Description
This 177-nucleotide RNA was probed chemically with DMS. Conditions: 150 mM KOAc, 10 mM MgCl2 and 150 mM bicine (pH 8.5), 24 C.
[RMDB]
RNA sequence: GGGAACGACUCGAGUAGAGUCGAAAACAGCGCUCGCCCCUUUCUCUGGGAGGACAACCUGCUGACCCGAAGCCAGGUAGGCCACCUCGUCCCCGUCCCCCUCACGUUGCAGCGUCCACCAGGCCAGCUUAGUAGCAUGCUUCGGCAUGCUACUAAGAAAAGAAACAACAACAACAAC
Reactivity to DMS in 0.01 (KOAc 150mM, MgCl2 10mM, bicine 150mM(pH8.5), 24C), signal-to-noise 2, nucleotides 027 to 126: c080a070g010c080g010c020u010c070g050c050c000c010c050u010u000u000c050u010c100u000g010g030g010a130g030g000a110c070a100a090c110c010u000g020c030u000g030a160c000c000c000g050a120a120g020c110c020a060g020g010u000a060g010g020c060c050a120c040c010u000c070g000u000c020c000c010c020g020u000c020c000c000c040c060u010c050a050c070g010u020u010g010c080a070g000c070g000u010c010c010a080c030c050a100g020g010c070c060a090g010
The data come from the RNA Mapping Database (RMDB), library OK2TRN.
Reactivities are given for positions 27 through 126.